This 207-nucleotide RNA was probed chemically with DMS and 2A3. For DMS the reverse transcriptase was MarathonRT. The reactions ran in a buffer of 150 mM KOAc, 10 mM MgCl2 and 150 mM bicine (pH 8.5), at 24 C. Reactivities are rounded to 0.1 and cut off at 0 and 3. Values cover nucleotides 27 to 156.
[RMDB]
RNA sequence: GGGAACGACUCGAGUAGAGUCGAAAAGUGCCGGCAAUACAGUGUGUAUGGAGGUCUCAAUGGCUCGGAAGUGCCAGCAAACCGGCGUAGAUGUUAGCAGACGUAUGGGCGUAAGACUUUUAUUGAAAAAAGUACAUAAGCUUCGGCUUAUGUACAACGAGAAAAUAUCCUUCGGGAUAUUUUCUCGAAAAGAAACAACAACAACAAC
Reactivity to DMS in 0.01 (KOAc 150mM, MgCl2 10mM, bicine 150mM(pH8.5), 24C), signal-to-noise 1, nucleotides 027 to 156: g000u000g000c010c000g000g060c020a120a100u000a050c030a140g030u020g050u010g030u020a050u000g020g000a150g020g000u000c030u000c030a070a160u000g020g050c000u000c040g030g030a180a150g020u020g000c000c020a050g010c020a020a090a160c020c020g090g010c020g060u000a090g000a080u000g020u010u000a140g070c000a050g020a080c050g040u010a030u000g010g020g010c010g020u000a080a120g000a120c040u000u000u020u000a080u000u080g000a000a030a110a070a090a240g000u000a000c000a020u000a000a000g010c000u000u010c300g060g000c000u010u000a000u000g010u020a010c020a020a010
Reactivity to 2A3 in 0.01 (KOAc 150mM, MgCl2 10mM, bicine 150mM(pH8.5), 24C), signal-to-noise 1, nucleotides 027 to 156: g080u040g020c000c000g000g030c040a040a060u060a100c050a030g090u040g000u000g010u150a040u070g040g000a030g000g030u030c020u040c180a040a080u100g010g000c020u010c060g020g050a080a040g030u020g120c010c020a000g000c060a040a050a040c000c060g000g010c010g000u010a060g000a120u050g000u120u120a040g010c020a010g030a090c010g040u100a080u080g040g030g000c000g010u080a070a000g020a000c000u000u150u120u150a130u060u140g100a000a090a000a000a000a090g010u030a000c000a000u010a010a000g000c000u000u070c170g090g000c010u010u010a000u000g000u000a010c000a000a010